The data come from the RNA Mapping Database (RMDB), library OK3TST. Structure probing data (DMS and 2A3) for a 207-nucleotide construct. For DMS the reverse transcriptase was MarathonRT. As a SHAPE reagent, 2A3 marks flexible, mostly unpaired nucleotides at the ribose 2'-OH.
RNA sequence: GGGAACGACUCGAGUAGAGUCGAAAAAAGGCAGAUCACUUGAGUUCUGGUGUUUGACAGCAGCCUGGGCAACAUGGUGAAACCCCCGUCUCUAGGAGAAGCACAAAAAAUUAGCUGGGCGUGUUGGUGCAUGCCUGUAAUCCCAGCUACUCAGGAAAGUAAUUACGAGGUUCGCCUCGUAAUUACUAAAAGAAACAACAACAACAAC
Reactivity to DMS in 0.01 (KOAc 150mM, MgCl2 10mM, bicine 150mM(pH8.5), 24C), signal-to-noise 1, nucleotides 027 to 156: a070a010g000g040c020a100g020a130u000c050a050c060u000u000g010a140g010u000u000c050u000g000g030u010g020u000u000u010g000a140c130a100g030c040a100g000c040c030u000g020g020g060c000a020a180c070a150u000g000g030u010g010a070a070a130c020c010c000c000c060g010u000c050u010c010u000a120g030g020a100g000a050a060g000c030a110c050a010a040a040a040a050a120u000u010a020g010c000u000g000g000g010c160g030u000g030u000u000g020g000u000g000c070a070u000g000c010c030u000g010u000a100a140u000c020c010c000a060g000c030u000a030c090u000c030a150g020g010a220a150
Reactivity to 2A3 in 0.01 (KOAc 150mM, MgCl2 10mM, bicine 150mM(pH8.5), 24C), signal-to-noise 1, nucleotides 027 to 156: a010a010g070g000c040a020g000a050u070c010a000c070u030u060g010a000g030u050u000c050u090g030g030u040g050u010u100u080g110a040c010a040g080c000a040g080c000c000u010g030g000g030c030a060a040c020a040u060g000g000u040g070a070a050a050c070c000c000c000c000g030u020c030u020c030u040a020g100g020a020g020a050a020g000c010a010c050a030a080a080a050a050a080u040u090a000g000c010u000g000g010g000c010g010u020g050u070u080g040g020u030g070c090a040u090g000c000c020u000g020u020a000a010u010c010c000c000a000g000c000u010a010c010u040c000a000g040g030a020a010